An RNA of 207 nucleotides, treated with DMS and 2A3 and read out base by base. For DMS the reverse transcriptase was MarathonRT.

[RMDB]
RNA sequence: GGGAACGACUCGAGUAGAGUCGAAAAAUAUAGCUGAUGCGGUGUUACGUGAACUCGGAAUGAGGGAUAAGGCUCUAUUUAUUUGCCCUUUCUCUUUCUGUGAAAUAAAGACGUUUACGCUAAGUGAAUAUGAGAUACAUAAGUAUUACGCAAAAGCAGAUCCUCUGAAAUUCGUUUCAGAGGAUCUAAAAGAAACAACAACAACAAC
Reactivity to DMS in 0.01 (KOAc 150mM, MgCl2 10mM, bicine 150mM(pH8.5), 24C), signal-to-noise 1, nucleotides 027 to 156: a130u010a110u010a140g020c030u000g020a200u000g020c060g010g040u010g030u000u000a040c020g010u000g010a020a060c030u000c050g000g000a120a060u030g010a020g000g010g020a040u000a060a070g010g010c010u000c190u010a160u000u000u000a240u020u000u010g010c050c010c030u000u000u000c000u000c020u010u000u000c060u010g010u000g030a090a110a100u010a100a120a210g000a070c080g020u000u000u000a060c000g060c040u000a090a120g030u020g000a030a090u000a090u030g010a160g040a150u010a070c030a090u000a020a120g000u000a080u000u000a060c000g000c030a030a060a110a060g020c030
Reactivity to 2A3 in 0.01 (KOAc 150mM, MgCl2 10mM, bicine 150mM(pH8.5), 24C), signal-to-noise 3, nucleotides 027 to 156: a000u110a010u090a020g030c020u030g000a020u060g010c020g010g060u130g120u220u060a020c030g010u040g070a080a040c010u010c030g000g030a020a040u060g030a040g040g020g020a070u080a160a030g010g010c000u010c020u080a260u150u300u040a200u090u140u160g000c040c000c000u010u040u010c010u010c000u000u000u030c010u010g030u070g130a030a080a110u240a070a070a010g080a020c030g000u000u040u030a010c030g000c040u020a070a030g050u030g100a060a040u110a060u130g080a090g030a050u130a150c040a040u200a160a010g050u070a030u060u050a030c050g020c030a000a000a110a000g020c020
Source information:
It was measured as part of the RMDB library OK3TST. For 2A3, 1,594 sequencing reads were counted. Values are in units of 0.01, from 0 to 300, in steps of 10.